[RMDB]
RNA sequence: GGGAACGACUCGAGUAGAGUCGAAAAAGUUACAUUGCACUUGACUCUGGGAGAGGCAAUUGGGACUGUAUUAUGACAAGCUACCAAUACUUAAUCAUUCAGAAUACAACAUGGGAAGAUCACUGCCCCACAGCCCUGGGUUCGCCCAGGGCUGUGGAAAAGAAACAACAACAACAAC
Reactivity to 2A3 in 0.01 (KOAc 150mM, MgCl2 10mM, bicine 150mM(pH8.5), 24C), signal-to-noise 2, nucleotides 027 to 126: a000g120u090u060a000c040a040u150u230g000c040a040c080u020u020g090a060c060u000c180u080g000g220g000a030g090a000g010g020c060a010a080u060u040g000g000g000a000c030u090g000u130a230u240u040a080u150g060a000c000a020a020g000c040u080a100c140c080a220a030u000a210c100u180u000a100a210u000c000a000u130u130c060a000g000a120a020u040a230c080a090a040c000a260u140g000g000g010a000a150g000a000u170c100a050c100u020g100c000c000